[RMDB]
RNA sequence: GGGAACGACUCGAGUAGAGUCGAAAACGCCUCAUCAUCCACAGGCUGAAGGCAGACGAUGAUGGUAUCUACCUGUGCGAGAUGCGGGGCCGGGUGCGCACCGUGGCCAACGUCACAGUCAAAGGUCCAUAUAACGACUAUUCGUAGUCGUUAUAUGAAAAGAAACAACAACAACAAC
Reactivity to DMS in 0.01 (KOAc 150mM, MgCl2 10mM, bicine 150mM(pH8.5), 24C), signal-to-noise 9, nucleotides 027 to 126: c210g010c020c010u000c030a040u010c020a060u000c020c070a120c160a150g000g010c030u000g010a130a170g010g020c040a050g000a170c240g010a060u000g010a060u000g010g010u010a060u000c040u000a130c200c010u000g010u000g010c060g000a080g000a060u000g000c120g010g000g000g020c020c020g010g010g020u010g010c120g000c050a050c020c030g010u000g010g010c030c060a070a090c080g010u010c030a020c050a060g010u000c100a040a090a090g000g010u000c080
Reactivity to 2A3 in 0.01 (KOAc 150mM, MgCl2 10mM, bicine 150mM(pH8.5), 24C), signal-to-noise 9, nucleotides 027 to 126: c050g050c000c010u020c010a040u010c000a060u000c010c020a050c040a100g100g000c020u080g160a120a070g190g000c030a030g030a080c080g040a060u130g020a020u060g030g080u090a090u020c020u030a060c020c010u020g010u030g040c050g030a070g010a080u090g030c040g030g000g000g000c010c010g150g010g060u150g030c090g000c030a020c020c020g040u060g040g020c030c020a050a030c040g080u120c020a020c020a060g030u050c050a100a090a030g050g010u020c020
The record gives the reactivity of an RNA of 177 nucleotides to DMS and 2A3. For DMS the reverse transcriptase was MarathonRT. It was measured as part of the RMDB library OK2TRN. The RNA was probed in 150 mM KOAc, 10 mM MgCl2 and 150 mM bicine (pH 8.5) at 24 C. For DMS, 44,822 sequencing reads were counted. 2A3 adducts were read by reverse transcription with SuperScript II with manganese.